[RMDB]
RNA sequence: GGGAACGACUCGAGUAGAGUCGAAAAUAGAACCUUCGGGUUCUAAGAGCCGAUGAUGGCAACAGGGUAGCUGCCGAUUGAUGACGAAGCCGUUCCAGUCUGAGGUAACGGAGGCAUUCGUGCCUCCCAGUAAGUCAUUAUUCGUAAUGACUUACUGAAAAGAAACAACAACAACAAC
Reactivity to DMS in 0.01 (KOAc 150mM, MgCl2 10mM, bicine 150mM(pH8.5), 24C), signal-to-noise 9, nucleotides 027 to 126: u010a010g000a010a010c000c000u000u010c200g040g010g020u000u000c000u010a020a100g010a210g020c040c020g010a110u000g010a100u000g010g010c030a050a070c080a080g010g010g010u000a050g010c050u000g010c030c020g010a130u000u000g010a090u000g010a090c050g000a100a110g010c030c020g000u000u000c020c010a090g010u010c070u000g010a120g000g000u010a070a080c140g010g010a010g010g010c010a030u000u010c180g010u000g010c000c000u000c000c020
Reactivity to 2A3 in 0.01 (KOAc 150mM, MgCl2 10mM, bicine 150mM(pH8.5), 24C), signal-to-noise 9, nucleotides 027 to 126: u060a000g000a010a010c010c000u020u040c250g080g000g000u010u000c000u010a030a050g040a030g060c020c030g060a140u150g020a020u110g030g030c030a040a020c030a070g090g010g060u060a030g020c030u030g020c030c020g080a090u060u170g090a090u110g010a030c030g040a060a020g030c030c010g020u030u010c020c000a020g090u020c050u070g050a040g040g070u050a070a020c050g000g000a000g000g000c010a010u040u060c140g070u040g000c000c000u000c000c000
Chemical mapping of a 177-nucleotide RNA with DMS and 2A3. For DMS, 28,730 sequencing reads were counted. The 2A3 profile rests on 33,534 reads. For 2A3 the reverse transcriptase was SuperScript II with manganese. The RNA was probed in 150 mM KOAc, 10 mM MgCl2 and 150 mM bicine (pH 8.5) at 24 C.